[RMDB]
RNA sequence: GGGAACGACUCGAGUAGAGUCGAAAAGCGGCUGCGCACGUUCAAGGCCGAGAACGACAAGUUUGCCGGCGUCAGGGCACAGCUGCGCGCAGAGCAAGCGACGCUGCAGGAGCAGCUGGCCGAGGAAUGACAGGCUGUAAUUCGUUACAGCCUGUCAAAAAGAAACAACAACAACAAC
Reactivity to DMS in 0.01 (KOAc 150mM, MgCl2 10mM, bicine 150mM(pH8.5), 24C), signal-to-noise 2, nucleotides 027 to 126: g010c040g020g000c020u000g010c070g000c050a100c030g020u000u010c080a130a200g000g020c020c010g020a300g020a040a050c030g010a180c210a060a150g000u000u000u000g010c110c000g010g010c020g000u000c100a070g000g010g010c010a050c040a050g010c020u000g000c010g000c080g020c030a030g000a210g010c070a140a080g000c070g000a130c070g000c030u000g020c010a150g030g000a130g040c020a010g000c020u000g020g000c010c010g000a150g010g010a080a100
Reactivity to 2A3 in 0.01 (KOAc 150mM, MgCl2 10mM, bicine 150mM(pH8.5), 24C), signal-to-noise 2, nucleotides 027 to 126: g030c050g020g020c020u020g000c030g040c000a050c070g020u040u070c050a100a030g130g000c020c000g010a000g000a020a000c020g150a090c050a160a090g020u020u070u040g170c150c020g030g030c020g050u100c060a060g080g020g000c050a060c000a300g000c000u010g020c020g000c000g000c000a010g000a000g030c040a180a010g050c060g170a100c140g050c040u050g010c040a020g010g240a080g000c000a010g010c000u000g050g000c000c000g030a100g040g140a150a110
Chemical mapping of a 177-nucleotide RNA with DMS and 2A3. The reactions ran in a buffer of 150 mM KOAc, 10 mM MgCl2 and 150 mM bicine (pH 8.5), at 24 C. 2A3 adducts were read by reverse transcription with SuperScript II with manganese.